[RMDB]
RNA sequence: GGGAACGACUCGAGUAGAGUCGAAAACCUUUGCAAGUGUCCAUCCUUCGACCAUAACCUUUGUGGUUUGGUCUUGGAUGGAGUACCCAUUUGCAAUUGGUUUAAUUCGGGUGUGUGUGUGAUUUUAAAGAUUAAAUACGUUCGCGUAUUUAAUCUUAAAAGAAACAACAACAACAAC
Reactivity to 2A3 in 0.01 (KOAc 150mM, MgCl2 10mM, bicine 150mM(pH8.5), 24C), signal-to-noise 2, nucleotides 027 to 126: c000c010u000u010u000g020c000a010a010g010u010g040u000c000c000a000u020c000c000u060u060c080g010a010c000c000a070u150a190a010c000c010u080u190u300g230u300g070g000u020u020u010g020g000u000c000u010u000g000g000a010u000g000g010a000g000u020a010c000c000c000a010u010u000u000g000c000a010a020u030u030g030g000u010u000u070a100a080u180u130c090g020g050g010u090g000u010g020u040g010u000g010u030g110a090u010u020u020u060a130
Reactivity to DMS in 0.01 (KOAc 150mM, MgCl2 10mM, bicine 150mM(pH8.5), 24C), signal-to-noise 5, nucleotides 027 to 126: c000c010u000u000u010g000c010a000a010g010u000g000u000c010c000a010u000c000c010u010u010c300g000a010c000c000a010u030a010a010c000c000u030u050u070g030u020g010g020u000u000u000g010g010u000c000u000u000g000g000a010u000g000g000a050g010u020a100c300c300c000a000u000u000u010g010c000a010a010u030u010g010g010u000u000u010a070a140u010u010c040g020g020g020u010g000u000g010u000g010u010g000u000g000a170u010u010u010u000a020